[RMDB]
RNA sequence: GGGAACGACUCGAGUAGAGUCGAAAAUCGUACUCACGAUCGUACGAGUGAUCUCUCUCGAACACGAACGUUCACUCGAACACGUGUGAGAUCGUACGUGAACGUGAUCUCGAUCGAGAGUGUGUUCGAACGAGUGAGUGAUCACGUUCGUUCGUACCGAUUAGUAGAUGUUCGCAUCUACUAAUCGAAAAGAAACAACAACAACAAC
Reactivity to DMS in 0.01 (KOAc 150mM, MgCl2 10mM, bicine 150mM(pH8.5), 24C), signal-to-noise 7, nucleotides 027 to 156: u000c030g030u000a070c030u010c070a110c040g000a100u000c070g030u000a050c010g010a100g020u000g000a150u000c030u000c020u000c020u000c030g000a080a170c070a150c030g010a060a070c040g020u000u000c000a080c070u000c060g020a090a110c070a070c030g010u010g010u020g010a100g000a070u000c020g020u010a070c070g020u000g010a070a080c040g010u010g010a070u000c000u010c020g010a150u000c040g010a150g010a110g020u010g050u000g020u000u000c020g020a040a170c040g010a110g020u000g000a110g000u010g000a150u000c020a040c010g010u010u000c010g010u000u000c020g020u000a130c060
Reactivity to 2A3 in 0.01 (KOAc 150mM, MgCl2 10mM, bicine 150mM(pH8.5), 24C), signal-to-noise 9, nucleotides 027 to 156: u090c020g010u050a040c020u030c070a030c020g050a070u040c020g000u030a010c010g010a030g030u030g030a040u000c020u000c000u000c000u010c030g050a110a030c070a020c110g030a070a020c030g040u110u090c020a010c020u030c030g080a160a050c070a030c160g080u110g060u140g070a030g010a040u050c040g070u090a060c040g030u080g140a160a040c030g020u060g040a040u010c010u000c030g150a210u050c060g010a030g000a020g110u050g010u020g010u020u020c020g010a060a060c030g010a020g030u070g020a020g010u040g020a010u010c010a000c020g010u030u030c010g010u020u020c010g000u020a070c040
Structure probing data (DMS and 2A3) for a 207-nucleotide construct. Reactivities are given for positions 27 through 156. The 2A3 profile rests on 59,081 reads. For 2A3 the reverse transcriptase was SuperScript II with manganese.